[RMDB]
RNA sequence: GGGAACGACUCGAGUAGAGUCGAAAAUGACGGCGCCCACAAUUGUGAAUCAAGAGAGGUAUGUUAAAAUUACUGGGUUGUACCCAACCAUUACGGUACCUGAAGAGUUCGCAAGUCAUGUUGCCAAACCCACGGUUGUUCGCAACCGUGAAAAGAAACAACAACAACAAC
Reactivity to DMS in 0.01 (KOAc 150mM, MgCl2 10mM, bicine 150mM(pH8.5), 24C), signal-to-noise 7, nucleotides 027 to 129: u040g000a060c030g000g030c080g020c110c030c000a150c100a120a170u000u000g030u040g020a080a020u040c090a080a060g080a180g010a050g020g000u020a020u010g000u010u010a020a050a040a090u020u020a160c160u000g000g010g010u000u050g000u050a290c030c020c030a040a060c160c170a090u020u060a090c090g050g050u000a000c000c030u040g000a130a050g000a100g000u000u000c050g000c030a050a030g050u020c090a080u050g020u000u000g000c020c030a050a080a080c010c050
Reactivity to 2A3 in 0.01 (KOAc 150mM, MgCl2 10mM, bicine 150mM(pH8.5), 24C), signal-to-noise 9, nucleotides 027 to 129: u160g050a030c080g020g020c020g040c030c030c010a060c040a040a120u040u030g010u020g040a010a020u070c140a210a020g140a020g020a030g130g030u030a010u080g090u100u200a100a080a080a090u140u090a090c100u050g000g030g020u030u140g060u190a100c000c020c020a000a040c010c000a040u070u090a020c060g060g000u000a010c010c000u020g040a090a030g000a050g110u010u010c000g000c010a000a020g040u130c040a030u080g050u020u120g000c010c020a080a030a040c030c010